An RNA of 177 nucleotides, treated with DMS and read out base by base. Conditions: 150 mM KOAc, 10 mM MgCl2 and 150 mM bicine (pH 8.5), 24 C.

RNA sequence: GGGAACGACUCGAGUAGAGUCGAAAAGAUAUGGAGACUUCGAUAAGGACGUAUCGGAAACGAUACCGUCCUUUUGACGAAGCUCCUAAGUCAAACCGCCUCGUAAACUUCGGUUUACGAGGCGGAACGGUAUUCAUGGGUUCGCCCAUGAAUACCGAAAAGAAACAACAACAACAAC
Reactivity to DMS in 0.01 (KOAc 150mM, MgCl2 10mM, bicine 150mM(pH8.5), 24C), signal-to-noise 1, nucleotides 027 to 126: g000a020u010a300u020g000g020a030g010a170c000u000u000c010g030a140u030a020a030g010g020a000c010g000u000a000u010c000g000g000a130a020a240c010g000a010u000a000c130c160g020u010c000c000u000u000u000u000g010a120c060g010a020a010g010c000u000c000c000u000a010a050g000u000c050a060a100a130c000c000g010c000c000u000c000g020u010a000a000a000c000u000u000c160g000g010u000u000u000a010c000g000a000g010g020c000g000g000a000a010